Source: RMDB library VIROID, as collected in RNAgym.
An RNA of 207 nucleotides, treated with 2A3 and read out base by base.
Values cover nucleotides 27 to 156.
The RNA was probed in 150 mM KOAc, 10 mM MgCl2 and 150 mM bicine (pH 8.5) at 24 C.
RNA sequence: GGGAACGACUCGAGUAGAGUCGAAAAUAACCUUCCGGAGGUCCCUCUCGAGCUCCUCCAACUUCUUUCUUCCAUUUACCCACUGCUCGAGAACCUCUUCUCUGCCUCCGCGGUUUUUCUUCGAUUCGGAGCGGCUCAUCCCGGCGAAGGGCGGCGGGGACAAGUUAUACUUCGGUAUAACUUGUCCAAAAGAAACAACAACAACAAC
Reactivity to 2A3 in 0.01 (KOAc 150mM, MgCl2 10mM, bicine 150mM(pH8.5), 24C), signal-to-noise 1, nucleotides 027 to 156: u070a000a050c010c030u170u070c030c060g010g000a000g020g020u050c050c010c010u030c000u000c010g000a000g000c010u090c070c030u120c100c000a080a080c060u210u160c040u080u140u040c030u140u070c070c070a120u110u090u190a140c010c040c020a020c060u100g020c010u000c010g000a000g010a000a010c000c020u130c020u150u100c050u040c020u130g050c020c000u020c010c000g000c000g050g020u060u030u050u020u000c010u020u010c000g100a110u120u050c010g010g040a020g060c030g020g020c060u090c040a120u060c060c030c000g000g030c050g030a010a030g040g000g000c020g000g020c020g040g090